[RMDB]
RNA sequence: GGGAACGACUCGAGUAGAGUCGAAAAGAAUACUCAGACAAAGCCCAGACUUUGGAGAGCGCCACAUUGCGUUAUUCCUGAAAUCCCAAUGGGUGAAGAAAAAUGAGAAAAUCGGCGCAGUCAACGAUCAUUAAUUUAAUUUCGAUUAAAUUAAUGAAAAAGAAACAACAACAACAAC
Reactivity to 2A3 in 0.01 (KOAc 150mM, MgCl2 10mM, bicine 150mM(pH8.5), 24C), signal-to-noise 3, nucleotides 027 to 126: g000a040a050u120a150c010u010c040a010g040a110c040a050a130a000g000c000c020c020a040g020a100c100u110u130u080g030g000a030g000a020g020c000g020c020c030a150c050a180u060u170g000c020g010u000u060a090u120u080c000c000u000g020a090a070a070u040c040c020c000a000a050u050g010g000g040u050g030a120a040g060a030a130a040a000a030u090g000a040g030a070a080a000a060u070c040g040g010c020g000c050a000g040u020c030a050a010c010g020a070
Reactivity to DMS in 0.01 (KOAc 150mM, MgCl2 10mM, bicine 150mM(pH8.5), 24C), signal-to-noise 7, nucleotides 027 to 126: g010a160a110u010a110c030u000c020a070g010a210c070a070a090a260g020c020c020c060a110g010a170c070u000u000u000g010g000a110g010a060g020c030g020c010c160a100c220a070u010u010g020c030g010u000u000a090u000u000c000c020u000g010a050a090a130u000c010c020c020a070a120u010g000g010g010u000g000a080a100g010a030a050a070a090a070u000g010a070g000a140a050a090a090u010c070g000g020c020g010c050a090g000u000c070a070a070c120g000a130